[RMDB]
RNA sequence: GGGAACGACUCGAGUAGAGUCGAAAAUGCGUCAGCCCGAGAUAUUCGCGCCACGCGCGCAGGGGCGUCGCCCCGUCGACCGUUGCGCUGACGACCGCAUGCGGAAUCAGGUCGCGCUCUUCGUCGCGACUGGCCCCAGGUUCGCCUGGGGCCAGUCAAAAGAAACAACAACAACAAC
Reactivity to DMS in 0.01 (KOAc 150mM, MgCl2 10mM, bicine 150mM(pH8.5), 24C), signal-to-noise 2, nucleotides 027 to 126: u000g070c040g020u000c030a110g010c010c010c020g010a070g000a110u000a190u050u020c080g010c040g000c010c040a130c150g000c100g020c040g040c100a080g020g030g020g010c020g010u000c080g010c000c000c010c000g000u030c060g000a070c030c030g010u000u000g020c060g020c000u000g050a070c060g000a080c260c050g010c060a040u000g040c010g010g000a090a090u000c120a170g000g020u000c030g010c020g000c080u000c110u000u000c110g020u000c000g010c080
Reactivity to 2A3 in 0.01 (KOAc 150mM, MgCl2 10mM, bicine 150mM(pH8.5), 24C), signal-to-noise 1, nucleotides 027 to 126: u160g010c000g020u020c010a040g020c040c010c020g040a040g020a030u200a110u090u180c050g000c020g030c030c020a160c180g140c010g010c040g000c090a040g020g020g000g030c080g020u100c080g020c030c000c000c010g020u030c030g020a080c020c000g070u100u070g020c000g000c070u070g050a060c000g010a010c010c020g100c070a080u150g050c000g000g020a010a140u130c030a060g010g100u040c040g030c000g010c020u030c010u160u050c070g040u060c040g000c010